[RMDB]
The record gives the reactivity of an RNA of 177 nucleotides to DMS and 2A3. The DMS profile rests on 2,328 reads. For 2A3, 4,551 sequencing reads were counted.
RNA sequence: GGGAACGACUCGAGUAGAGUCGAAAAUCCGUUGUCUUCGGACAACGGAAAAGAAGCGCGGACACAAAAGCACGAGCUCGCCGUGAGGCGCAAAGGCGAUAAAAAGCUCAAACUUCGGUUUGAGCAACCAUUCUGAAAUGUUCGCAUUUCAGAAUGGAAAAGAAACAACAACAACAAC
Reactivity to DMS in 0.01 (KOAc 150mM, MgCl2 10mM, bicine 150mM(pH8.5), 24C), signal-to-noise 3, nucleotides 027 to 126: u000c010c000g000u000u010g010u000c030u000u020c190g030g020a000c000a000a020c000g010g010a010a010a060a110g000a110a080g000c020g010c000g000g010a090c140a040c110a090a080a130a070g000c060a050c030g010a190g000c090u000c030g010c010c010g020u000g000a120g020g000c010g020c100a010a050a140g000g000c020g010a040u010a040a070a080a090a080g010c010u000c000a000a000a000c000u000u020c160g020g020u010u000u000g010a020g010c000a020a030
Reactivity to 2A3 in 0.01 (KOAc 150mM, MgCl2 10mM, bicine 150mM(pH8.5), 24C), signal-to-noise 3, nucleotides 027 to 126: u000c000c000g000u000u020g000u000c000u030u040c260g130g000a000c000a000a000c000g000g000a040a040a000a000g030a090a020g000c020g010c030g060g090a060c050a000c020a130a170a010a040g050c010a000c070g020a040g070c030u030c030g010c020c000g040u050g040a050g020g020c010g000c020a000a090a000g020g000c020g010a000u170a070a080a010a020a010g010c000u000c000a010a000a000c010u060u100c200g040g000u000u010u000g000a000g010c000a000a010

It was measured as part of the RMDB library M2PK50.